[RMDB]
Chemical mapping of a 177-nucleotide RNA with DMS and 2A3. Values cover nucleotides 27 to 126. For 2A3, 5,761 sequencing reads were counted. It was measured as part of the RMDB library OK2TRN. The RNA was probed in 150 mM KOAc, 10 mM MgCl2 and 150 mM bicine (pH 8.5) at 24 C.

RNA sequence: GGGAACGACUCGAGUAGAGUCGAAAAAGCUCAUGCGUCUGGACGAUAGCGACGGUCGGCGCGCCUUCAAUGCCGGGACCAAUGCCGGGCGCAACAUGGAAAUCGUUCGGUCGGUGGAGGAUUGAUCGAGAUGAAAACAUUUCGAUGUUUUCAUCUCAAAAGAAACAACAACAACAAC
Reactivity to DMS in 0.01 (KOAc 150mM, MgCl2 10mM, bicine 150mM(pH8.5), 24C), signal-to-noise 5, nucleotides 027 to 126: a110g000c040u000c030a150u010g000c020g030u000c010u010g010g000a040c060g000a100u000a090g020c070g010a100c090g010g010u000c040g020g020c060g010c140g000c040c060u000u000c140a090a070u020g010c050c030g000g000g000a070c060c070a080a130u000g010c000c010g010g000g000c020g010c050a040a070c150a110u010g000g010a050a090a080u000c040g010u000u000c030g000g000u000c040g010g030u010g000g000a120g000g010a140u010u000g000a110u010c130
Reactivity to 2A3 in 0.01 (KOAc 150mM, MgCl2 10mM, bicine 150mM(pH8.5), 24C), signal-to-noise 5, nucleotides 027 to 126: a000g040c020u040c030a050u140g040c010g030u000c020u050g030g020a030c040g080a100u080a110g090c070g110a090c040g030g080u080c020g030g050c020g000c010g010c030c000u100u130c070a110a110u200g060c010c000g050g030g040a050c030c020a050a030u150g020c010c000g030g020g040c010g030c000a000a010c020a040u100g090g020a050a120a060u070c030g020u040u010c020g020g040u030c020g000g040u060g030g040a050g050g020a110u050u130g040a070u140c110